[RMDB]
RNA sequence: GGGAACGACUCGAGUAGAGUCGAAAAGAAAAAGGAGGACAUGUGCGCCUGAUUGUGUCCGACCCUGUAGAUACUUCGCUCUGGAAAUUGUGCGGGACAACCCACGCGCGCAGCGAGCCGAAAAAAAGUGUUCAUUAAUCUUCGGAUUAAUGAACACAAAAGAAACAACAACAACAAC
Reactivity to 2A3 in 0.01 (KOAc 150mM, MgCl2 10mM, bicine 150mM(pH8.5), 24C), signal-to-noise 1, nucleotides 027 to 126: g030a010a120a030a000a000g040g000a020g020g000a010c020a010u050g000u060g070c010g060c000c040u030g060a180u070u140g000u000g020u030c000c000g000a060c010c000c000u010g030u110a090g040a090u180a190c060u030u130c060g070c030u060c030u030g150g050a050a160a170u170u080g060u110g080c090g000g000g010a010c020a000a040c020c020c030a030c010g040c000g000c000g000c000a000g100c020g030a040g000c050c060g120a140a070a010a010a010a030a000
Reactivity to DMS in 0.01 (KOAc 150mM, MgCl2 10mM, bicine 150mM(pH8.5), 24C), signal-to-noise 2, nucleotides 027 to 126: g000a010a060a030a120a110g020g030a220g020g010a000c030a060u000g020u000g020c000g040c010c040u020g000a090u000u000g000u010g010u020c000c010g060a140c080c020c020u000g010u000a040g000a120u020a060c180u010u010c070g030c010u010c050u000g010g000a080a090a090u010u000g030u000g010c000g000g000g010a050c060a020a060c060c020c040a090c170g000c010g000c040g010c050a030g000c120g020a060g000c040c050g000a000a000a040a040a050a080a100
Annotation
The record gives the reactivity of an RNA of 177 nucleotides to 2A3 and DMS. For 2A3, 1,039 sequencing reads were counted. For DMS, 1,052 sequencing reads were counted.